[RMDB]
RNA sequence: GGGAACGACUCGAGUAGAGUCGAAAAUGAUCAGCUCACAGACGCUUCAGCAUGGUGGAGUUGACACCAUUAGCAAUGUGCUUUUGCACUAUCGAGGGACUGGACGUCAAGCAGUCUGUACGUCCACACGUCUCCUCAGAUUCGUCUGAGGAGACGUAAAAGAAACAACAACAACAAC
Reactivity to 2A3 in 0.01 (KOAc 150mM, MgCl2 10mM, bicine 150mM(pH8.5), 24C), signal-to-noise 3, nucleotides 027 to 126: u150g060a080u080c010a010g020c000u000c020a070c010a040g060a070c020g060c050u140u130c100a050g000c040a030u100g020g100u090g030g020a240g050u180u100g070a060c020a010c040c000a000u070u050a030g050c080a080a150u090g020u040g020c030u180u220u160u280g010c000a010c030u050a070u130c060g070a110g050g030g030a000c030u000g020g030a000c010g020u020c010a000a010g070c020a000g090u080c010u040g010u060a030c040g030u020c010c000a020c000
Reactivity to DMS in 0.01 (KOAc 150mM, MgCl2 10mM, bicine 150mM(pH8.5), 24C), signal-to-noise 3, nucleotides 027 to 126: u020g010a120u000c070a080g010c030u000c040a140c140a150g000a040c080g000c120u000u000c120a070g000c070a070u000g010g010u010g010g000a130g020u000u000g040a120c020a050c030c000a070u000u000a110g020c140a130a090u000g000u000g020c000u000u000u020u000g000c000a020c020u000a060u010c110g010a160g000g010g000a100c040u000g000g000a050c000g000u000c030a080a100g030c120a060g000u030c040u000g000u010a050c070g020u000c020c020a090c220

The record gives the reactivity of an RNA of 177 nucleotides to 2A3 and DMS. Conditions: 150 mM KOAc, 10 mM MgCl2 and 150 mM bicine (pH 8.5), 24 C. Source: RMDB library OK2TST, as collected in RNAgym. For 2A3, 1,899 sequencing reads were counted.